[RMDB]
RNA sequence: GGGAACGACUCGAGUAGAGUCGAAAAAGUAAAUUCCGUUCGCGGAAUUUACUAAAAAGAUAUGGAUCUAUCAGACACGUUGAUGACCUCGGAAACGAGCAAGACGGUCUGAGUAGAUCCUAAGUCAAAAAUCAAGUUUGCUUCGGCAAACUUGAAACCCCUAUUAAUCCUUCGGGAUUAAUAGGGGAAAAGAAACAACAACAACAAC
Reactivity to 2A3 in 0.01 (KOAc 150mM, MgCl2 10mM, bicine 150mM(pH8.5), 24C), signal-to-noise 1, nucleotides 027 to 156: a070g010u010a000a010a000u000u020c000c010g010u010u030c210g010c020g030g000a000a000u000u000u000a000c000u000a000a050a000a010a000g090a040u170a060u180g000g000a000u000c000u000a020u050c020a000g000a000c080a000c300g030u050u050g030a280u050g060a060c010c000u000c020g060g020a120a080a040c010g020a010g070c020a070a140g010a000c010g000g000u000c000u000g030a020g000u010a000g000a000u000c000c000u010a020a000g070u000c030a000a100a000a000a200u130c000a000a000g190u000u010u000g000c010u020u040c130g110g000c020a000a000a000c000u000u000g000a010a030a020
An RNA of 207 nucleotides, treated with 2A3 and read out base by base.
Conditions: 150 mM KOAc, 10 mM MgCl2 and 150 mM bicine (pH 8.5), 24 C.
The 2A3 profile rests on 835 reads.